[RMDB]
RNA sequence: GGGAACGACUCGAGUAGAGUCGAAAAAGUUGCAGGCCUCGAGCAUCUGUCGGUUGAAGUCCUCCCGCAUCUUGAGGUUUCUGUCCAAUCAUGUCUCUAUCAAAGCCUCUCUCGCUGCUUCCAGCUAUGUCUUAGCUACAUUCGUGUAGCUAAGACAAAAAGAAACAACAACAACAAC
Reactivity to 2A3 in 0.01 (KOAc 150mM, MgCl2 10mM, bicine 150mM(pH8.5), 24C), signal-to-noise 1, nucleotides 027 to 126: a010g090u060u040g000c000a000g000g040c000c000u030c050g000a010g030c030a150u080c040u080g190u220c000g020g080u130u090g130a190a030g110u060c020c030u040c000c000c000g050c010a040u050c060u030u050g020a000g000g000u060u100u060c010u020g070u020c040c010a020a020u020c030a000u100g090u000c020u000c000u070a040u100c080a120a020a010g000c000c020u030c020u000c000u000c010g010c040u040g030c000u030u010c020c020a020g040c050u080a090
Reactivity to DMS in 0.01 (KOAc 150mM, MgCl2 10mM, bicine 150mM(pH8.5), 24C), signal-to-noise 3, nucleotides 027 to 126: a070g010u000u000g010c030a070g030g000c030c010u000c030g000a070g000c260a060u010c080u020g000u010c060g030g000u000u000g010a090a130g010u010c110c040u010c030c020c020g020c090a050u010c020u010u000g020a060g000g000u010u010u010c030u000g010u000c120c030a070a070u010c070a050u000g000u000c010u000c010u000a110u000c100a060a070a150g000c020c010u010c050u000c020u000c040g010c030u000g010c040u000u000c010c020a080g000c110u000a090